The record gives the reactivity of an RNA of 177 nucleotides to DMS and 2A3. Reactivities are rounded to 0.1 and cut off at 0 and 3. For 2A3, 959 sequencing reads were counted. Reactivities are given for positions 27 through 126.
[RMDB]
RNA sequence: GGGAACGACUCGAGUAGAGUCGAAAACAGUCAAAGUGAAGGCGGGCCAGACCAUCGCCGCAUUCUACCAGAGCACCGUCAUGAUCUUUGGCACGAUGGCUCGCUACAUCCGUAGAGUUAGGGAAAAGGCGAUAUAGGGAUUCGUCCCUAUAUCGCCAAAAGAAACAACAACAACAAC
Reactivity to DMS in 0.01 (KOAc 150mM, MgCl2 10mM, bicine 150mM(pH8.5), 24C), signal-to-noise 1, nucleotides 027 to 126: c190a070g010u000c100a000a140a080g030u000g020a190a040g000g030c000g020g000g000c020c000a100g040a140c050c040a030u000c090g000c060c040g000c080a060u020u000c110u000a070c080c070a130g020a120g000c050a070c060c010g030u000c080a060u010g000a090u000c010u000u020u000g020g010c030a150c110g030a040u000g020g000c030u000c080g000c020u000a030c030a040u010c040c070g010u010a090g020a070g000u000u010a050g010g010g000a020a070a110a000
Reactivity to 2A3 in 0.01 (KOAc 150mM, MgCl2 10mM, bicine 150mM(pH8.5), 24C), signal-to-noise 1, nucleotides 027 to 126: c020a030g030u000c010a000a040a000g010u020g050a090a010g000g000c010g000g070g030c000c000a010g000a070c000c010a070u090c060g070c080c000g020c000a030u190u030c030u130a140c050c060a020g030a000g040c100a080c130c000g030u020c060a290u080g070a050u060c030u060u020u030g020g000c040a000c040g080a070u100g060g000c010u060c030g000c020u070a010c020a080u070c090c030g000u070a020g000a010g080u060u190a060g060g050g010a090a040a040a000
The RNA was probed in 150 mM KOAc, 10 mM MgCl2 and 150 mM bicine (pH 8.5) at 24 C. 2A3 adducts were read by reverse transcription with SuperScript II with manganese.